[RMDB]
RNA sequence: GGGAACGACUCGAGUAGAGUCGAAAAGAAUUUAUACAAGGCAUGACUGUAAUAUAAUGAAUCUGAUUUUUCUGUGUGACUUGUGGAAUCAAUCCUAUUUCUUUAUAAUCACAUCUUGUAUAUUAAACCAUUAGCUCACCUUCGGGUGAGCUAAUGGAAAAGAAACAACAACAACAAC
Reactivity to 2A3 in 0.01 (KOAc 150mM, MgCl2 10mM, bicine 150mM(pH8.5), 24C), signal-to-noise 3, nucleotides 027 to 126: g050a080a110u100u080u040a060u000a030c010a000a000g030g010c050a040u070g040a110c050u100g050u160a150a030u060a140u030a040a040u060g030a010a000u050c040u010g040a030u040u010u010u020u010c070u050g150u060g070u070g160a140c040u220u130g060u190g040g060a000a010u080c030a030a000u000c040c000u080a120u050u040u000c020u040u040u030a090u010a050a100u060c010a020c000a020u020c010u000u000g040u000a000u000a030u060u110a040a090a050